[RMDB]
RNA sequence: GGGAACGACUCGAGUAGAGUCGAAAAAAAUGCAUUGAGAAGAACACAGCAUCACUUCUAUGAUAUUCCUGCCCAAAACGCAUAACCUGAAUAUUAUCAUAAGGUAACAUCAGACAACCUCAAAUCAAGGGACAUCCUUAAGGAUUUCAUGACAGUCUCUUCCUAGAUCCUUCGGGAUCUAGGAAGAAAAAGAAACAACAACAACAAC
Reactivity to 2A3 in 0.01 (KOAc 150mM, MgCl2 10mM, bicine 150mM(pH8.5), 24C), signal-to-noise 1, nucleotides 027 to 156: a000a000a000u170g000c100a060u110u110g010a010g000a000a040g020a060a090c140a020c030a050g070c000a060u040c010a030c020u130u000c030u050a060u090g010a010u010a050u020u080c000c020u020g020c000c000c000a000a140a020a020c090g100c010a090u020a090a030c070c020u010g100a080a050u110a150u260u140a000u100c090a020u010a210a000g000g010u000a020a060c000a050u110c050a000g010a050c020a020a090c000c010u020c020a050a070a090u040c020a070a030g040g000g050a010c010a050u050c000c000u060u090a000a020g000g010a020u090u130u060c090a090u190g060a040c010a020g050u020c010
Structure probing data (2A3) for a 207-nucleotide construct. The RNA was probed in 150 mM KOAc, 10 mM MgCl2 and 150 mM bicine (pH 8.5) at 24 C. It was measured as part of the RMDB library OK3TST.